The record gives the reactivity of an RNA of 170 nucleotides to 2A3 and DMS. 2A3 is a SHAPE reagent: it acylates the 2'-hydroxyl of flexible nucleotides of all four kinds. For 2A3 the reverse transcriptase was SuperScript II with manganese. The reactions ran in a buffer of 150 mM KOAc, 10 mM MgCl2 and 150 mM bicine (pH 8.5), at 24 C. Reactivities are given for positions 27 through 129. DMS adducts were read by reverse transcription with MarathonRT. It was measured as part of the RMDB library 15KLIB. For 2A3, 30,071 sequencing reads were counted.
[RMDB]
RNA sequence: GGGAACGACUCGAGUAGAGUCGAAAACCGGCGAAUCGUCCCCACAUAGCAGCUCCCGGACCCCCUUCCAAAGAGACCGGGGGGGAGUUUGGAGCGCGGGGGGGACCGUCGGGUCCGUGGGAUGCCCUAAUGUCAUCUUUCGAGAUGACAAAAAGAAACAACAACAACAAC
Reactivity to 2A3 in 0.01 (KOAc 150mM, MgCl2 10mM, bicine 150mM(pH8.5), 24C), signal-to-noise 9, nucleotides 027 to 129: c000c000g010g000c020g030a090a150u160c070g040u000c030c000c040c000a090c010a040u160a030g020c110a050g000c000u060c040c030c010g020g000a030c000c000c010c000c000u110u090c080c030a130a190a020g240a040g060a110c100c130g000g000g000g000g000g010g000a110g020u020u040u050g000g000a010g010c000g010c020g010g010g010g000g000g000g010a000c000c000g020u000c000g010g000g020u030c020c000g040u150g050g020g020a050u090g020c000c000c000u060a100a090
Reactivity to DMS in 0.01 (KOAc 150mM, MgCl2 10mM, bicine 150mM(pH8.5), 24C), signal-to-noise 8, nucleotides 027 to 129: c000c010g020g010c000g030a120a100u050c130g000u010c010c000c020c010a080c110a140u030a100g050c020a110g030c030u020c030c010c070g050g010a060c000c000c020c000c040u000u080c010c000a080a130a140g060a140g000a090c230c140g010g020g000g020g010g000g010a050g000u000u020u010g000g000a030g020c000g000c040g020g020g020g020g020g000g010a000c040c030g010u020c030g020g010g000u020c000c000g040u000g010g030g000a050u050g020c000c020c030u020a110a180